[RMDB]
RNA sequence: GGGAACGACUCGAGUAGAGUCGAAAAUUUCACGCUGCAGCCGCUUCUUAUUCUUGUGCCUCGGCCUUUCUGGGCGCCCCCGGACAAAGCCCCCAGAACCCGGUCGCUCCCUUCCCGCUAAAUCCCCUAGAGAUGUAUUCUUCGGAAUACAUCUCUAAAAAGAAACAACAACAACAAC
Reactivity to 2A3 in 0.01 (KOAc 150mM, MgCl2 10mM, bicine 150mM(pH8.5), 24C), signal-to-noise 3, nucleotides 027 to 126: u050u070u060c050a010c050g030c010u090g020c030a030g040c030c020g030c030u070u020c020u050u150a140u110u070c060u060u110g060u100g060c010c000u040c030g030g000c020c000u040u120u040c040u050g020g020g000c000g030c000c000c010c000c020g030g000a010c020a020a080a030g000c010c010c000c000c010a000g020a030a020c020c020c000g020g000u030c000g000c020u020c000c000c010u010u010c000c000c000g000c010u030a080a080a060u020c000c000c000c000
Reactivity to DMS in 0.01 (KOAc 150mM, MgCl2 10mM, bicine 150mM(pH8.5), 24C), signal-to-noise 3, nucleotides 027 to 126: u010u060u020c030a050c090g000c020u000g030c080a150g010c020c040g000c020u010u000c060u000u000a060u030u040c050u000u010g000u010g000c010c010u000c070g010g000c020c030u000u000u010c030u030g000g000g010c140g000c020c020c010c010c030g010g000a060c140a040a080a160g000c050c020c010c010c050a050g020a070a100c100c050c040g000g000u020c070g000c030u000c000c000c010u020u010c010c000c000g020c070u020a070a120a120u000c010c000c010c170